The data come from the RNA Mapping Database (RMDB), library TTRDES. Structure probing data (2A3 and DMS) for a 177-nucleotide construct. Conditions: 150 mM KOAc, 10 mM MgCl2 and 150 mM bicine (pH 8.5), 24 C. 2A3 is a SHAPE reagent: it acylates the 2'-hydroxyl of flexible nucleotides of all four kinds. For DMS, 3,272 sequencing reads were counted.

RNA sequence: GGGAACGACUCGAGUAGAGUCGAAAAGAUAUGGAUCGGCCCACUGUUCGAUGAAACUAGUCGGAAACGACUAGUGGAGAACGUGGCCGAUCCUAAGUCAAAACGCAGCGGGUUCGCCCGCUGCGAACAGGUUAGAAAGGUUCGCCUUUCUAACCUGAAAAGAAACAACAACAACAAC
Reactivity to 2A3 in 0.01 (KOAc 150mM, MgCl2 10mM, bicine 150mM(pH8.5), 24C), signal-to-noise 2, nucleotides 027 to 126: g020a030u050a020u090g010g000a010u000c000g000g050c120c200c040a050c160u300g070u040u030c130g090a300u040g000a020a000a010c010u000a000g010u000c010g030g000a040a040a060c010g000a000c010u000a000g000u000g020g000a000g010a020a020c040g000u100g010g000c000c010g000a000u000c000c000u010a010a010g000u000c020a000a010a100a080c030g000c000a000g000c010g080g000g070u110u220c250g230c080c000c000g000c000u000g000c000g000a000a010
Reactivity to DMS in 0.01 (KOAc 150mM, MgCl2 10mM, bicine 150mM(pH8.5), 24C), signal-to-noise 3, nucleotides 027 to 126: g010a030u000a300u000g000g000a000u000c010g010g000c110c020c090a260c280u010g020u000u010c010g000a090u010g000a150a170a020c010u000a000g000u000c010g000g010a090a060a100c010g010a010c000u000a010g000u000g010g000a050g000a010a000c050g010u000g010g010c000c010g010a010u000c000c000u000a010a090g000u000c030a100a070a160a260c040g020c000a000g030c000g010g010g010u000u010c270g030c000c000c000g010c000u000g000c000g000a030a150